An RNA of 177 nucleotides, treated with 2A3 and DMS and read out base by base.
RNA sequence: GGGAACGACUCGAGUAGAGUCGAAAAGAUAUGGACUGUGUCAGCGUCGAUAAGCUUGUAUCGGAAACGAUAUAAAGCUUUUGACGACGUUACAGUCCUAAGUCAAAGGUUUACUUCGGUAAACCAACUCUGACAAAUCGUUCGCGAUUUGUCAGAGAAAAGAAACAACAACAACAAC
Reactivity to 2A3 in 0.01 (KOAc 150mM, MgCl2 10mM, bicine 150mM(pH8.5), 24C), signal-to-noise 1, nucleotides 027 to 126: g000a020u020a040u090g020g000a000c000u050g000u020g080u260c210a020g000c000g000u020c040g130a150u080a300a010g000c020u010u030g000u000a000u000c000g040g000a030a020a020c010g000a010u000a000u060a100a270a000g010c000u030u030u020u090g080a030c060g020a020c020g070u050u050a000c000a010g020u020c000c010u010a010a000g010u030c070a170a050a160g000g050u000u000u000a040c030u040u090c300g170g000u060a010a000a000c010c000a000a000
Reactivity to DMS in 0.01 (KOAc 150mM, MgCl2 10mM, bicine 150mM(pH8.5), 24C), signal-to-noise 1, nucleotides 027 to 126: g010a020u010a300u010g000g000a010c000u000g030u000g010u000c090a280g000c030g020u000c000g010a040u020a010a030g010c000u000u010g020u010a000u000c000g000g010a070a110a300c000g030a010u010a020u000a040a010a010g010c000u000u000u000u000g020a110c030g030a040c030g020u000u000a000c020a000g020u000c000c010u010a010a140g010u000c010a060a140a300g020g010u000u000u000a010c000u010u000c210g020g000u010a000a010a010c010c000a130a040

The 2A3 profile rests on 1,742 reads. The reactions ran in a buffer of 150 mM KOAc, 10 mM MgCl2 and 150 mM bicine (pH 8.5), at 24 C.